[RMDB]
RNA sequence: GGGAACGACUCGAGUAGAGUCGAAAAAGGCCCACGGUAAGGCCUCCAGUAAGUAGAAGCUAUUAGUAGAAAACUGAGCCUCCAAGUGGCAGCAGUGGGGGGUGCCUUUCAGGACCCACUGCCUGGGACAUCUUCAAUCUUUCGAGAUUGAAGAUGUAAAAGAAACAACAACAACAAC
Reactivity to 2A3 in 0.01 (KOAc 150mM, MgCl2 10mM, bicine 150mM(pH8.5), 24C), signal-to-noise 4, nucleotides 027 to 126: a020g080g010c000c000c010a020c090g010g030u070a050a010g000g000c030c000u030c070c000a030g020u080a120a050g020u060a040g060a300a020g050c050u050a050u300u110a240g110u050a030g070a070a060a000a010c010u020g000a000g020c000c010u000c020c020a130a040g070u160g140g020c020a010g000c000a000g030u010g000g000g000g020g030g080u160g030c020c000u080u220u120c070a040g000g030a030c000c000c000a000c000u000g000c000c010u010g000g050g030
Reactivity to DMS in 0.01 (KOAc 150mM, MgCl2 10mM, bicine 150mM(pH8.5), 24C), signal-to-noise 6, nucleotides 027 to 126: a160g000g010c030c010c020a090c120g010g000u000a080a040g000g010c020c010u010c030c010a030g010u000a060a090g010u000a100g000a160a150g010c060u000a080u010u010a090g020u000a070g000a110a100a110a030c010u000g000a140g000c000c000u000c020c060a140a160g020u010g010g000c050a070g010c020a010g020u000g000g000g000g000g010g020u000g020c030c010u000u000u010c160a060g010g000a220c000c000c000a010c010u000g000c020c020u000g000g000g010
An RNA of 177 nucleotides, treated with 2A3 and DMS and read out base by base. Values cover nucleotides 27 to 126. For DMS, 7,963 sequencing reads were counted. The reactions ran in a buffer of 150 mM KOAc, 10 mM MgCl2 and 150 mM bicine (pH 8.5), at 24 C. DMS adducts were read by reverse transcription with MarathonRT. It was measured as part of the RMDB library OK2TRN.